Chemical mapping of a 207-nucleotide RNA with 2A3. Values cover nucleotides 27 to 156. Source: RMDB library OK3TST, as collected in RNAgym.
[RMDB]
RNA sequence: GGGAACGACUCGAGUAGAGUCGAAAAGCCGAUGCCGGCAUCAACGAUGAGCGGCACAUCCGGAAAAUGUGCUCGGAAUGCCCGCAGCGCCAUCGGGUUCACCGCUCCCAUGGCAGAGCCGAUCGGCGCACACCAAGGCAUCAGGACGCGGCAGCCGGACAUAACGCUACUUCGGUAGCGUUAUGUCAAAAGAAACAACAACAACAAC
Reactivity to 2A3 in 0.01 (KOAc 150mM, MgCl2 10mM, bicine 150mM(pH8.5), 24C), signal-to-noise 1, nucleotides 027 to 156: g000c000c000g030a010u010g020c020c000g050g080c050a090u060c030a100a110c040g110a070u170g010a050g080c030g050g000c000a000c010a070u030c070c040g090g060a070a070a000a010u160g020u010g040c050u040c060g040g050a110a070u040g000c040c010c000g000c040a000g000c000g010c000c000a000u000c060g070g010g000u130u030c020a030c010c000g030c020u160c000c090c000a060u040g010g000c130a100g000a020g000c000c000g030a000u010c280g030g000c000g000c010a000c000a010c020c020a080a050g030g060c000a000u000c000a010g090g050a030c060g000c000g030g000c000a000g040c050c060g000